[RMDB]
RNA sequence: GGGAACGACUCGAGUAGAGUCGAAAAUAAGGACUGUUCAGGGUAUAUAUCAAAGCUCUUGCUGGGUUUCCCUGAAAAAAACAGUGUAAGUUCAUUUGCAUUGGUACCCCCAGAGAAAAAGAGCUCGAUACGUUAUAAAGUUCGCUUUAUAACGUAUAAAAGAAACAACAACAACAAC
Reactivity to 2A3 in 0.01 (KOAc 150mM, MgCl2 10mM, bicine 150mM(pH8.5), 24C), signal-to-noise 1, nucleotides 027 to 126: u150a050a080g060g010a000c030u080g040u130u020c020a000g000g040g200u040a180u050a040u000a030u300c080a150a170a070g000c000u000c030u160u110g030c010u030g020g020g000u050u060u010c020c000c010u040g000a060a020a000a020a020a000a020c000a000g000u000g020u030a040a020g030u030u110c030a070u150u050u010g000c000a000u020u040g040g040u150a110c020c010c030c000c000a000g000a000g000a110a200a000a000a000g020a000g040c000u000c010g070
Reactivity to DMS in 0.01 (KOAc 150mM, MgCl2 10mM, bicine 150mM(pH8.5), 24C), signal-to-noise 3, nucleotides 027 to 126: u000a140a120g000g000a080c110u000g000u000u010c050a060g000g010g000u000a080u010a110u010a100u010c060a090a100a120g000c020u000c060u000u010g000c060u000g000g000g000u000u000u000c010c000c010u000g010a000a000a050a050a040a050a070c010a020g030u000g010u000a010a040g000u010u010c240a130u000u000u000g010c010a010u000u000g000g000u010a140c100c060c000c010c010a060g000a210g000a090a070a080a060a050g010a050g000c030u000c300g010